[RMDB]
RNA sequence: GGGAACGACUCGAGUAGAGUCGAAAAUUCACCGCGUGCGGUGAGCAUCACUACAGGAAUGUUGCGCGUCAUCUCUUCGCGCUUCAUAUGCUUGAUGAGGUUGAUGCCACUACCACCAGGCAACAUACGGAUAUCGUCGAUUCGUCGACGAUAUCCGAAAAGAAACAACAACAACAAC
Reactivity to 2A3 in 0.01 (KOAc 150mM, MgCl2 10mM, bicine 150mM(pH8.5), 24C), signal-to-noise 2, nucleotides 027 to 126: u020u020c030a060c030c010g010c040g060u020g010c030g040g040u010g020a100g040c000a010u040c030a000c000u060a050c000a020g000g000a090a020u030g000u030u030g000c010g020c000g070u030c030a220u070c120u000c000u070u150c010g010c000g010c000u010u000c010a040u120a020u190g060c030u050u090g030a100u080g160a140g110g000u090u140g000a010u010g000c010c000a020c010u020a040c010c020a010c010c030a030g060g080c020a050a050c020a130u160a080
Reactivity to DMS in 0.01 (KOAc 150mM, MgCl2 10mM, bicine 150mM(pH8.5), 24C), signal-to-noise 1, nucleotides 027 to 126: u010u000c030a070c000c010g050c120g010u000g040c090g020g000u000g000a130g020c000a030u000c000a040c010u010a130c020a100g010g010a050a120u000g000u020u000g030c030g080c010g030u000c190a190u000c240u000c140u010u000c000g000c070g040c010u000u010c030a050u010a060u000g000c000u000u000g000a130u000g030a090g010g030u020u000g000a030u000g000c000c030a050c030u000a100c220c010a060c030c070a060g000g000c060a050a020c080a080u000a170